An RNA of 207 nucleotides, treated with 2A3 and DMS and read out base by base. DMS adducts were read by reverse transcription with MarathonRT. The RNA was probed in 150 mM KOAc, 10 mM MgCl2 and 150 mM bicine (pH 8.5) at 24 C. 2A3 adducts were read by reverse transcription with SuperScript II with manganese.
[RMDB]
RNA sequence: GGGAACGACUCGAGUAGAGUCGAAAACUCACUCACUACGGUGAGUGAGAAUGCUUAAGCCUCAAUAAAGCUUGGCUUGAGUGCCUCAAGCAGAUUUAGACUGAAACAUUUAGUAAGGCCAAGCAGGGAGCAACGGCUCGAGUACGCUCGAGCCGAAAUUUACCUAUUUAUUCGUAAAUAGGUAAAUAAAAGAAACAACAACAACAAC
Reactivity to 2A3 in 0.01 (KOAc 150mM, MgCl2 10mM, bicine 150mM(pH8.5), 24C), signal-to-noise 3, nucleotides 027 to 156: c000u000c000a000c000u000c000a010c010u040a020c270g090g000u000g000a000g000u000g000a000g000a020a040u040g000c000u060u030a060a010g010c000c000u010c030a080a130u120a140a150a010g000c000u020u010g000g020c000u030u040g040a020g040u100g060c000c020u060c050a070a020g000c010a020g030a150u090u190u300a060g040a090c030u100g020a120a120a000c030a090u080u110u110a070g010u070a080a020g030g000c000c000a000a000g010c020a010g010g040g030a110g020c010a080a030c020g000g000c000u000c010g000a010g010u040a030c170g020c100u000c000g000a010g020c000c000g010a020a010
Reactivity to DMS in 0.01 (KOAc 150mM, MgCl2 10mM, bicine 150mM(pH8.5), 24C), signal-to-noise 2, nucleotides 027 to 156: c010u000c000a030c000u010c010a020c020u000a110c280g090g010u010g030a010g010u000g030a020g030a020a020u000g010c030u000u000a060a160g000c010c000u000c050a060a100u000a060a080a160g040c020u000u000g040g000c040u010u010g010a120g020u000g000c020c040u000c040a030a070g040c020a180g010a230u000u000u010a120g010a140c020u000g020a120a040a010c030a040u000u000u000a080g020u010a100a070g010g020c000c010a010a040g040c000a150g020g040g000a140g000c030a130a190c010g040g000c000u000c000g000a080g040u000a080c270g010c040u000c000g000a000g070c140c000g000a000a010